The record gives the reactivity of an RNA of 177 nucleotides to DMS and 2A3.

RNA sequence: GGGAACGACUCGAGUAGAGUCGAAAACAGUAUGCCUUCGGGCAUACUGAAACCAGAGGGUAUCUGGCCCACGCUGCCAUGCGUGCCGGGAAUCCCAUCCCAAAACGGAUGUCUUCGGACAUCCGAAGAUAGCAACCUUCUUCGGAAGGUUGCUAUCAAAAGAAACAACAACAACAAC
Reactivity to DMS in 0.01 (KOAc 150mM, MgCl2 10mM, bicine 150mM(pH8.5), 24C), signal-to-noise 1, nucleotides 027 to 126: c040a000g000u000a000u010g010c010c020u000u000c180g020g010g050c000a000u020a030c000u000g000a040a020a100c070c100a070g000a100g000g020g020u000a060u000c040u000g010g010c300c090c040a020c030g010c000u020g020c160c160a080u010g030c030g010u010g000c100c080g000g000g000a080a080u000c000c010c010a110u000c020c000c000a020a050a100a220c040g020g000a040u010g000u000c000u030u010c120g010g000a000c000a000u000c000c000g000a020a040
Reactivity to 2A3 in 0.01 (KOAc 150mM, MgCl2 10mM, bicine 150mM(pH8.5), 24C), signal-to-noise 2, nucleotides 027 to 126: c000a020g020u000a020u010g010c000c000u070u140c300g080g020g000c010a000u000a000c010u010g000a040a000a000c050c000a030g100a100g070g060g030u130a070u050c000u000g000g020c040c080c000a000c010g000c020u270g270c060c040a110u240g000c000g000u010g000c030c030g010g000g010a010a040u040c000c000c000a030u040c010c040c010a020a050a050a060c000g020g010a000u010g000u000c000u050u050c230g040g000a000c010a010u040c020c000g000a010a010

Conditions: 150 mM KOAc, 10 mM MgCl2 and 150 mM bicine (pH 8.5), 24 C. For 2A3, 2,092 sequencing reads were counted. For DMS, 890 sequencing reads were counted.